[RMDB]
Chemical mapping of a 207-nucleotide RNA with DMS and 2A3. The reactions ran in a buffer of 150 mM KOAc, 10 mM MgCl2 and 150 mM bicine (pH 8.5), at 24 C. The data come from the RNA Mapping Database (RMDB), library RNAMAK. The DMS profile rests on 3,295 reads. 2A3 adducts were read by reverse transcription with SuperScript II with manganese.

RNA sequence: GGGAACGACUCGAGUAGAGUCGAAAAGACGUGUUCGCACGUCAUAAUGCGUACUACCGUUGCAGGUGGCUCGUUGAAAUGGAGGCUGUCCCAAAUAGGACAGUGAAGUGGAGAGCCAUAUUGGCAACGGUAUCGCCUCACCUGCUUUCGAGCAGAAGCACUACACAUUAUUCGUAAUGUGUAGUGCAAAAGAAACAACAACAACAAC
Reactivity to DMS in 0.01 (KOAc 150mM, MgCl2 10mM, bicine 150mM(pH8.5), 24C), signal-to-noise 2, nucleotides 027 to 156: g020a030c010g030u000g000u010u020c260g050c000a040c000g100u010c030a050u000a060a070u010g020c040g000u000a120c140u000a010c020c000g080u000u000g050c080a160g010g080u000g000g020c020u000c020g000u000u020g000a210a210a080u000g000g000a300g010g000c000u010g030u000c000c000c010a070a160a280u010a060g010g000a020c000a010g020u010g020a150a290g000u000g000g000a100g000a080g000c000c010a030u000a010u000u010g030g010c020a030a040c030g010g000u000a000u000c010g040c000c030u000c030a070c120c010u000g000c010u000u020u000c160g000a120g030c040a050g000a170a200
Reactivity to 2A3 in 0.01 (KOAc 150mM, MgCl2 10mM, bicine 150mM(pH8.5), 24C), signal-to-noise 6, nucleotides 027 to 156: g000a010c020g000u030g030u090u150c230g020c120a000c000g040u010c010a010u160a040a070u150g030c030g010u070a090c040u010a010c000c000g010u000u000g010c020a020g060g000u000g000g000c000u010c010g200u210u050g020a020a030a010u030g010g020a030g300g000c000u000g000u000c000c030c010a090a120a080u300a050g000g000a000c000a000g020u040g170a020a010g030u030g030g010a010g000a000g010c000c020a010u040a070u050u100g130g010c000a000a000c000g000g030u000a010u000c000g000c000c000u030c050a120c030c000u010g010c020u120u120u140c240g100a030g000c010a010g030a030a020